The record gives the reactivity of an RNA of 207 nucleotides to 2A3.
[RMDB]
RNA sequence: GGGAACGACUCGAGUAGAGUCGAAAAAUUCGCUCACCACGUCCACCGUCGGCAUUCGGGUAAGUAUUUCAAUCGGGCCAACACGGUCAACGUAUUUGCCGGCUUGCGCAUCGAUAAAAACGAUAUCAUCUAAUUUUUUACCGCCAGAACCGCCCGGAACCAAUCUUACCUUCGGGUAAGAUUGGUUAAAAGAAACAACAACAACAAC
Reactivity to 2A3 in 0.01 (KOAc 150mM, MgCl2 10mM, bicine 150mM(pH8.5), 24C), signal-to-noise 1, nucleotides 027 to 156: a000u150u030c010g010c070u060c010a080c020c000a070c030g030u070c000c040a060c050c000g050u050c000g000g000c010a090u040u040c000g000g040g000u030a090a000g050u020a190u030u190u030c090a060a060u080c030g020g060g000c010c000a000a050c120a020c060g090g120u150c060a090a000c030g040u090a230u160u050u000g030c010c000g040g000c120u000u020g040c030g000c040a090u140c040g030a010u150a110a130a040a090a030c090g000a030u030a030u200c040a050u000c030u070a070a300u030u000u000u000u000u070a080c090c020g120c000c040a070g010a180a010c000c000g030c070c050c030g000g020
Notes: 2A3 adducts were read by reverse transcription with SuperScript II with manganese. It was measured as part of the RMDB library OK3TST.